Record summary:
The record gives the reactivity of an RNA of 207 nucleotides to DMS and 2A3. For DMS, 3,102 sequencing reads were counted. For DMS the reverse transcriptase was MarathonRT. The reactions ran in a buffer of 150 mM KOAc, 10 mM MgCl2 and 150 mM bicine (pH 8.5), at 24 C.
RNA sequence: GGGAACGACUCGAGUAGAGUCGAAAACUGGUUGAAGUGGCUUCUCCUGGGCGAUCGCUCGCUGUUUUUGUGGCUGGCUUUCAGCGGGCUGGAGGAGCCGGGAGCGGAGGCGGAGGACCGCGCCAAAGAUGCUAUGUUCACUUCGGUGAACAUAGAAGUUCAGUGUAAUGUUCGCAUUACACUGAACAAAAGAAACAACAACAACAAC
Reactivity to DMS in 0.01 (KOAc 150mM, MgCl2 10mM, bicine 150mM(pH8.5), 24C), signal-to-noise 1, nucleotides 027 to 156: c050u000g000g030u000u000g020a070a150g020u000g030g000c000u000u010c010u010c020c020u000g020g050g030c040g000a090u000c080g000c030u000c070g010c010u000g000u000u010u010u000u010g040u020g030g080c000u000g040g000c070u010u000u010c000a040g030c040g000g010g030c000u000g030g010a120g010g010a080g020c000c020g000g030g010a040g020c060g000g010a070g030g020c050g060g020a110g010g010a160c010c010g010c040g000c020c050a090a060a100g000a180u000g020c000u000a010u000g010u000u000c000a020c010u000u000c300g000g010u000g000a050a010c000a000u000a000g010a020a090
Reactivity to 2A3 in 0.01 (KOAc 150mM, MgCl2 10mM, bicine 150mM(pH8.5), 24C), signal-to-noise 2, nucleotides 027 to 156: c020u020g070g030u080u120g060a090a050g060u050g050g000c000u000u020c000u030c000c040u100g010g080g040c070g080a100u080c060g000c010u000c020g000c010u000g090u040u050u030u050u170g100u070g050g090c090u050g030g030c000u030u060u000c010a020g000c020g000g020g020c050u050g030g010a010g020g000a040g000c020c010g010g000g000a010g000c030g000g020a030g010g050c110g000g030a040g020g030a000c030c030g000c000g000c020c010a060a040a020g080a030u140g010c000u000a000u010g000u000u000c000a000c000u010u010c050g030g000u000g000a000a000c000a000u000a010g010a030a010